[RMDB]
RNA sequence: GGGAACGACUCGAGUAGAGUCGAAAAAGGGCGGUAGUAAGGAGACGUGAAAACAAUGUGCGGGCAAAAAACGCACUAGAUACAGGAGGACAAGACUGGUGCCAGCACCCGCGGUAAUACCAGCUCCCACAUUCGCAUGGUUCGCCAUGCGAAUGUGAAAAGAAACAACAACAACAAC
Reactivity to DMS in 0.01 (KOAc 150mM, MgCl2 10mM, bicine 150mM(pH8.5), 24C), signal-to-noise 3, nucleotides 027 to 126: a130g000g000g000c020g010g010u000a030g010u020a110a040g000g020a030g010a060c120g000u000g010a160a100a060a080c090a070a100u060g000u000g000c020g020g000g000c140a020a070a070a040a020a080c130g000c000a010c000u010a060g000a070u030a140c100a070g010g010a090g010g010a040c120a060a090g000a120c010u000g000g050u000g000c060c070a160g020c100a170c060c040c000g020c070g010g020u010a030a100u020a170c020c030a030g000c030u020c000c060
Reactivity to 2A3 in 0.01 (KOAc 150mM, MgCl2 10mM, bicine 150mM(pH8.5), 24C), signal-to-noise 2, nucleotides 027 to 126: a000g020g040g010c030g020g010u100a060g010u050a100a000g030g030a040g080a070c050g020u080g000a020a050a020a060c190a050a090u200g000u010g060c000g000g030g070c050a010a110a110a070a000a000c060g000c030a000c010u010a010g000a030u130a060c040a040g050g000a000g000g060a000c060a110a000g020a090c010u030g020g000u000g010c000c010a000g030c000a070c000c000c000g010c050g010g000u040a090a050u060a110c000c000a010g010c020u120c030c040